[RMDB]
RNA sequence: GGGAACGACUCGAGUAGAGUCGAAAAAUUCAUGGAGCCAUCAAGGAUUACCCCUCAAAUGGUGUCAAUUUCCGGUCGACAGAUCUCAGAGAGAACCUCAGCGGCCCAGUUUUUCCUUUUUUGCCUUUAAUGAGGCAUAUUUCGAUAUGCCUCAUUAAAAAGAAACAACAACAACAAC
Reactivity to DMS in 0.01 (KOAc 150mM, MgCl2 10mM, bicine 150mM(pH8.5), 24C), signal-to-noise 3, nucleotides 027 to 126: a060u010u010c030a090u020g010g010a220g010c020c010a040u000c090a080a060g010g010a130u000u020a160c120c030c030c020u000c070a090a090a050u030g000g000u000g020u010c050a070a080u010u000u020c030c030g020g050u010c070g000a060c110a040g020a090u010c080u010c110a140g000a080g020a120g000a080a070c030c000u000c090a070g020c120g020g000c000c010c000a010g010u010u000u020u020u000c000c000u000u000u010u000u010u000g010c120c090u000u000
Reactivity to 2A3 in 0.01 (KOAc 150mM, MgCl2 10mM, bicine 150mM(pH8.5), 24C), signal-to-noise 6, nucleotides 027 to 126: a000u100u080c060a060u110g060g010a020g040c020c010a030u040c060a070a030g040g010a030u090u180a170c020c010c000c010u060c040a120a170a080u090g020g010u040g070u060c020a060a060u040u060u050c040c020g000g030u040c030g030a050c020a060g060a090u030c020u040c100a040g060a010g000a020g020a140a050c010c010u030c020a030g030c030g010g010c000c000c000a000g010u000u000u010u030u050c030c000u070u090u030u010u110u160g060c010c000u000u000
The data come from the RNA Mapping Database (RMDB), libraries RFM100 and RFMREP. An RNA of 177 nucleotides, treated with DMS and 2A3 and read out base by base. The RNA was probed in 150 mM KOAc, 10 mM MgCl2 and 150 mM bicine (pH 8.5) at 24 C. 2A3 adducts were read by reverse transcription with SuperScript II with manganese.